RNA sequence: GGGAACGACUCGAGUAGAGUCGAAAAUGAAAGAGUUUCCUUUAACCUAUAUGGAAGCAAAGAUCAAGAAUACAACCUUCCCAUAUGGUUGACUUAAUUAUUCCCUAGGUUCCUGGAAGCUUAAAAACGUAAGGACUACUUUCGAGUAGUCCUUACGAAAAGAAACAACAACAACAAC
Reactivity to 2A3 in 0.01 (KOAc 150mM, MgCl2 10mM, bicine 150mM(pH8.5), 24C), signal-to-noise 2, nucleotides 027 to 126: u240g050a040a070a100g020a000g000u010u010u020c000c000u020u020u010a010a000c000c010u020a010u010a040u300g030g000a010a020g060c100a160a040a050g090a040u100c050a010a070g030a230a060u170a170c010a010a020c010c000u060u020c000c070c080a060u090a020u250g010g010u010u000g010a010c000u020u010a020a040u060u070a050u100u000c010c020c000u020a000g000g000u000u050c000c010u040g010g020a000a000g010c030u040u050a030a080a020a050a000
Reactivity to DMS in 0.01 (KOAc 150mM, MgCl2 10mM, bicine 150mM(pH8.5), 24C), signal-to-noise 2, nucleotides 027 to 126: u010g010a110a080a160g010a020g010u000u000u000c000c000u000u000u010a000a020c000c000u000a030u010a080u010g010g010a020a000g030c270a100a090a120g000a050u010c100a010a040g000a120a210u010a180c020a030a020c040c000u000u000c090c020c090a150u000a030u000g000g000u000u000g000a130c020u000u000a040a030u000u000a070u000u000c000c000c240u000a040g000g000u000u000c070c060u000g010g010a000a000g000c000u000u000a010a050a060a080a090
Annotation: Structure probing data (2A3 and DMS) for a 177-nucleotide construct. The reactions ran in a buffer of 150 mM KOAc, 10 mM MgCl2 and 150 mM bicine (pH 8.5), at 24 C. The 2A3 profile rests on 1,584 reads. 2A3 adducts were read by reverse transcription with SuperScript II with manganese.